[RMDB]
RNA sequence: GGGAACGACUCGAGUAGAGUCGAAAAGAAGAAAGAUGUGUAAGGAAGGAAUGCAACUGUGUGCCGAUUGAACACAAAGUACGAAAAAGUACGAAAAGUCGUGCAUAGGAUUGUGUGAAAGAAAGAAGGGUAAUGAUAACUUCGGUUAUCAUUACCCAAAAGAAACAACAACAACAAC
Reactivity to 2A3 in 0.01 (KOAc 150mM, MgCl2 10mM, bicine 150mM(pH8.5), 24C), signal-to-noise 4, nucleotides 027 to 126: g090a020a000g040a030a110a000g070a040u100g090u070g050u190a070a010g060g120a050a020g040g080a100a030u100g050c000a030a030c040u020g010u000g010u010g100c040c020g020a010u040u070g130a110a000c040a010c010a120a060a020g000u000a000c010g090a070a180a000a080a170g000u010a000c030g040a050a100a040a000g070u030c000g020u060g010c000a010u020a030g050g070a070u050u010g050u000g000u020g080a130a070a080g140a060a050a000g150a050a080
Reactivity to DMS in 0.01 (KOAc 150mM, MgCl2 10mM, bicine 150mM(pH8.5), 24C), signal-to-noise 4, nucleotides 027 to 126: g010a110a020g010a080a050a080g000a030u030g000u000g020u010a060a090g000g000a090a050g000g000a110a050u000g000c040a040a080c080u000g020u030g020u000g000c100c010g000a020u010u020g000a100a090c200a070c300a070a090a120g000u000a010c000g000a070a060a120a140a120g000u000a020c030g000a050a050a150a040g000u000c010g040u020g010c010a020u000a130g000g010a060u010u010g010u010g010u000g010a070a070a090g000a110a050a090g000a110a090